[RMDB]
Record summary
An RNA of 177 nucleotides, treated with 2A3 and DMS and read out base by base. For 2A3 the reverse transcriptase was SuperScript II with manganese. For 2A3, 5,638 sequencing reads were counted.
RNA sequence: GGGAACGACUCGAGUAGAGUCGAAAAAUAGAGAUCGUCGUUUGGUGAAGAGGCAGGUAGAGAUCACAUAUCCUUCAGAACAAAUGCAGCAAUCAGAACAGGUGGUGUAUAGAUCCUUGGGCUCGCCCUUACUCUCAGGUUUCGACCUGAGAGUAAGAAAAGAAACAACAACAACAAC
Reactivity to 2A3 in 0.01 (KOAc 150mM, MgCl2 10mM, bicine 150mM(pH8.5), 24C), signal-to-noise 4, nucleotides 027 to 126: a000u140a020g080a000g020a070u050c040g050u000c030g020u060u070u150g070g020u050g030a120a050g020a050g080g000c030a000g010g000u070a040g020a020g020a100u040c050a010c020a100u160a060u040c010c000u100u090c050a020g020a140a060c020a050a090a040u090g010c010a020g010c000a000a090u090c010a030g040a110a050c010a050g010g050u040g020g010u020g040u020a070u020a090g050a050u000c010c020u020u030g030g030g010c030u020c030g070c010c020
Reactivity to DMS in 0.01 (KOAc 150mM, MgCl2 10mM, bicine 150mM(pH8.5), 24C), signal-to-noise 6, nucleotides 027 to 126: a110u010a080g010a100g000a060u000c050g030u000c040g020u000u010u010g000g020u000g000a100a100g010a100g000g020c070a060g020g010u010a040g010a090g010a060u000c050a050c100a060u010a100u000c030c020u000u000c090a060g010a080a080c120a030a070a060u000g000c050a060g010c040a080a050u000c080a060g010a070a070c150a060g000g010u000g010g000u000g010u000a070u000a080g010a060u000c050c010u000u000g010g010g010c040u000c110g010c070c070